Structure probing data (2A3 and DMS) for a 177-nucleotide construct.

RNA sequence: GGGAACGACUCGAGUAGAGUCGAAAAACUAGUAUGUACACGAUGAGACUGCCGUGUCGUCUAGACUGCGGAUCCAAUAAUCUCAGAUCUGCGAGAUAUUGUCUCGAGAGUACGAGACAAGUACUCAGUGUUAUGAGUACUUCGGUGCUCGUAACACAAAAGAAACAACAACAACAAC
Reactivity to 2A3 in 0.01 (KOAc 150mM, MgCl2 10mM, bicine 150mM(pH8.5), 24C), signal-to-noise 9, nucleotides 027 to 126: a000c010u020a010g070u130a040u040g080u090a010c010a000c010g050a060u120g040a030g110a100c090u110g100c060c000g000u000g000u000c000g000u000c000u010a030g040a150c030u040g000c000g010g000a000u000c010c020a050a060u200a140a120u100c070u020c090a010g000a010u000c000u010g010c020g030a010g000a010u210a040u040u020g000u000c000u000c000g020a040g000a010g080u130a050c000g000a000g000a000c000a000a000g040u030a030c010u010c030a010
Reactivity to DMS in 0.01 (KOAc 150mM, MgCl2 10mM, bicine 150mM(pH8.5), 24C), signal-to-noise 9, nucleotides 027 to 126: a130c010u000a010g010u050a010u010g010u060a010c010a010c010g010a090u010g010a160g020a140c120u030g010c070c010g010u000g000u000c000g010u010c010u000a010g000a190c060u010g010c010g000g010a010u010c010c150a090a100u040a090a110u020c140u020c190a130g000a010u000c000u000g010c010g000a030g000a140u020a070u000u000g000u000c010u000c000g000a130g000a140g020u060a070c010g000a030g010a020c040a010a020g000u020a090c010u000c020a140
Description
DMS adducts were read by reverse transcription with MarathonRT. The data come from the RNA Mapping Database (RMDB), library OK1LIB. As a SHAPE reagent, 2A3 marks flexible, mostly unpaired nucleotides at the ribose 2'-OH. Conditions: 150 mM KOAc, 10 mM MgCl2 and 150 mM bicine (pH 8.5), 24 C.